[RMDB]
This 207-nucleotide RNA was probed chemically with 2A3 and DMS. For DMS the reverse transcriptase was MarathonRT. Conditions: 150 mM KOAc, 10 mM MgCl2 and 150 mM bicine (pH 8.5), 24 C. As a SHAPE reagent, 2A3 marks flexible, mostly unpaired nucleotides at the ribose 2'-OH.
RNA sequence: GGGAACGACUCGAGUAGAGUCGAAAACGGCGUAUUCGUACGCCGAAAAAAUCCUAAGUCCGUUGAUCUCGAUCUAGGCAAUGACGCUGGUCGGAAACGACCAGUAAGACAGCCUAGCGAGGGAGGAUAUGGAAAAAAAGAAGUGUUCGCACUUCAAACGUAUAGUGGUUUUCGAACCACUAUACGUAAAAGAAACAACAACAACAAC
Reactivity to 2A3 in 0.01 (KOAc 150mM, MgCl2 10mM, bicine 150mM(pH8.5), 24C), signal-to-noise 5, nucleotides 027 to 156: c010g000g010c000g000u010a030u050u110c240g030u050a020c000g000c000c010g020a000a000a000a010a000a010u050c060c010u090a160a030g060u000c000c000g170u170u020g010a010u000c000u000c010g130a220u090c000u010a000g000g010c040a040a110u020g000a010c030g000c030u000g000g000u000c010g020g030a080a070a070c000g000a000c010c020a000g000u000a010a010g010a010c020a220g300c010c000u000a000g000c000g000a000g000g000g000a010g000g000a010u020a060u090g000g040a030a050a010a020a000a000a070g040a010a000g000u010g050u100u190c230g030c090a000c000u000u000c010a120a050
Reactivity to DMS in 0.01 (KOAc 150mM, MgCl2 10mM, bicine 150mM(pH8.5), 24C), signal-to-noise 2, nucleotides 027 to 156: c040g010g000c000g050u000a010u000u000c270g010u000a010c000g060c000c000g000a010a010a040a060a020a070u020c010c000u000a060a300g020u000c000c000g060u000u000g010a140u010c000u000c010g030a160u010c020u000a030g000g000c020a160a130u000g010a120c160g030c010u000g010g000u000c010g030g010a100a070a240c010g000a000c000c000a000g000u000a010a080g010a240c090a100g010c000c010u000a020g020c010g010a090g020g020g010a070g030g000a070u010a110u000g000g030a040a000a040a060a100a140a110g000a040a010g030u000g000u000u010c080g010c050a020c000u000u010c000a030a160